RNA sequence: GGGAACGACUCGAGUAGAGUCGAAAAGAAUUCGCCACCGUGCUGCAGUUCGCCCAAUUGGAGCUGGACAACAAGGAGCAGAUGCUUGUUAAGGUGCGCGAGGAGUGCGAACAGCUCAAGCUGGAGACUCCGGGUGAUGAUUCGUCAUCACCCGGAGAAAAGAAACAACAACAACAAC
Reactivity to 2A3 in 0.01 (KOAc 150mM, MgCl2 10mM, bicine 150mM(pH8.5), 24C), signal-to-noise 1, nucleotides 027 to 126: g060a030a210u080u000c000g020c000c030a070c010c060g070u110g010c010u060g070c030a030g030u030u120c050g110c000c080c000a010a150u120u190g050g040a060g080c090u100g070g090a090c020a050a000c010a030a030g080g060a060g030c070a030g040a290u250g090c040u020u000g000u030u070a080a040g040g000u020g010c130g000c020g050a000g030g070a020g020u160g050c020g000a130a020c020a020g030c020u090c160a000a080g050c020u090g090g000a040g000a060
Reactivity to DMS in 0.01 (KOAc 150mM, MgCl2 10mM, bicine 150mM(pH8.5), 24C), signal-to-noise 1, nucleotides 027 to 126: g010a090a130u010u000c040g020c010c020a070c020c040g010u040g000c070u000g010c050a040g010u000u000c090g000c020c020c060a240a140u010u000g020g010a050g020c010u000g000g000a060c090a070a040c020a000a040g030g010a130g030c200a060g010a160u000g000c010u000u000g000u020u000a130a070g010g000u010g030c100g010c010g000a090g040g000a090g030u020g070c040g010a030a130c000a080g000c010u000c130a060a120g030c030u000g010g000a150g040a190